Structure probing data (2A3 and DMS) for a 177-nucleotide construct. For DMS, 43,178 sequencing reads were counted. For DMS the reverse transcriptase was MarathonRT. The 2A3 profile rests on 36,314 reads.
RNA sequence: GGGAACGACUCGAGUAGAGUCGAAAAGAACGCCACUUCGGUGGCGUUCGAAGAUCUACCACACGUAGAUCACUAUCGUGUGAGACAUCGAUAGAUGUCAUAUGGUCCGGAAGUUCGCUUCCGGAAACAUGAUAACUUCAUUCGUGAAGUUAUCAUGAAAAGAAACAACAACAACAAC
Reactivity to 2A3 in 0.01 (KOAc 150mM, MgCl2 10mM, bicine 150mM(pH8.5), 24C), signal-to-noise 9, nucleotides 027 to 126: g000a010a000c000g010c010c000a010c020u040u070c220g100g000u000g000g000c000g000u000u000c000g000a000a000g020a020u000c020u050a100c020c060a050c020a000c100g020u020a010g020a150u150c070a050c100u110a100u190c070g020u040g010u020g070a150g000a030c000a000u010c010g050a040u130a270g020a010u040g040u010c010a040u100a100u260g140g030u000c000c000g000g000a000a000g010u050u150c210g030c110u000u000c000c000g000g010a010a000a000
Reactivity to DMS in 0.01 (KOAc 150mM, MgCl2 10mM, bicine 150mM(pH8.5), 24C), signal-to-noise 9, nucleotides 027 to 126: g000a010a010c000g010c000c000a010c000u000u010c190g030g020u000g010g010c000g010u000u000c000g000a100a090g000a070u000c020u000a090c090c050a060c100a050c070g010u000a020g000a110u010c300a100c090u000a030u010c040g010u000g010u000g010a240g010a030c010a000u000c000g010a150u020a090g000a020u000g010u000c010a090u010a060u010g010g010u000c000c000g000g000a010a010g010u000u010c230g020c000u000u000c000c000g000g000a010a020a100